[RMDB]
RNA sequence: GGGAACGACUCGAGUAGAGUCGAAAAGUUGCUCAAGCAGACGUCCAUGUCGAUCAUCGAGGUGGCCUCGGUCUGCGGCUUCGUCUCCACCCCGCACUUCUCCAAGUGCUACCGCGAGUACUUCGGAUAUUAGGUACGGAUUCGUCCGUACCUAAUAAAAAGAAACAACAACAACAAC
Reactivity to 2A3 in 0.01 (KOAc 150mM, MgCl2 10mM, bicine 150mM(pH8.5), 24C), signal-to-noise 3, nucleotides 027 to 126: g020u010u040g020c020u040c130a100a050g010c010a010g010a020c000g030u000c000c040a030u080g220u100c020g000a140u130c040a150u140c050g020a010g010g050u010g010g000c080c040u080c130g050g060u000c010u020g020c000g000g010c000u030u030c020g110u000c030u000c020c010a040c010c020c000c010g050c020a050c030u060u070c050u010c050c030a030a000g000u010g000c020u030a050c020c080g130c030g040a020g060u010a060c010u060u050c060g000g020a010
Reactivity to DMS in 0.01 (KOAc 150mM, MgCl2 10mM, bicine 150mM(pH8.5), 24C), signal-to-noise 7, nucleotides 027 to 126: g010u000u000g010c020u010c110a150a160g010c020a020g010a030c040g010u000c010c020a020u000g000u000c000g010a200u000c200a140u010c020g000a030g000g020u000g000g010c230c090u020c080g030g010u000c010u000g010c020g000g010c020u000u000c030g000u000c040u000c020c030a190c030c020c000c030g010c110a050c090u000u000c100u000c070c070a050a040g020u000g000c010u000a060c090c090g010c080g000a080g020u010a040c050u000u000c090g000g010a240

Structure probing data (2A3 and DMS) for a 177-nucleotide construct.
For DMS, 9,411 sequencing reads were counted.
It was measured as part of the RMDB library OK2TST.